[RMDB]
Chemical mapping of a 177-nucleotide RNA with 2A3 and DMS. The reactions ran in a buffer of 150 mM KOAc, 10 mM MgCl2 and 150 mM bicine (pH 8.5), at 24 C. The data come from the RNA Mapping Database (RMDB), library OK1LIB.
RNA sequence: GGGAACGACUCGAGUAGAGUCGAAAAAUGGUGUGGACUUCCUGGUGCCCGUGAUGGGCUAUAUCUGCCGCAUCUGCCACAAGUUCUAUCACAGCAACUCAGGGGCACAGCUCUCCCACUGCAAGUCUCUUUAGAAAGUCUUCGGACUUUCUAAAGAAAAAGAAACAACAACAACAAC
Reactivity to 2A3 in 0.01 (KOAc 150mM, MgCl2 10mM, bicine 150mM(pH8.5), 24C), signal-to-noise 9, nucleotides 027 to 126: a010u140g030g010u030g020u050g030g050a110c030u130u060c070c020u040g050g020u030g010c020c040c080g030u060g050a080u140g010g010g000c010u000a010u000a010u020c060u050g050c010c010g070c050a070u040c120u110g030c020c000a050c020a060a020g020u060u040c050u060a110u130c020a030c020a060g040c020a050a090c030u040c110a020g040g000g010g010c020a000c000a050g030c000u010c010u010c010c000c010a030c040u050g020c040a050a060g050u030c020
Reactivity to DMS in 0.01 (KOAc 150mM, MgCl2 10mM, bicine 150mM(pH8.5), 24C), signal-to-noise 5, nucleotides 027 to 126: a070u010g000g000u010g000u010g010g010a150c070u010u010c050c010u010g010g040u010g000c010c010c040g010u020g010a070u040g000g010g000c020u000a020u020a070u020c110u020g000c030c050g020c060a050u000c070u000g010c010c030a070c100a090a050g010u010u010c030u020a050u000c110a060c040a150g010c040a030a050c040u020c030a050g020g000g010g010c020a040c030a030g000c020u020c090u000c020c000c000a080c100u050g010c130a060a060g000u010c080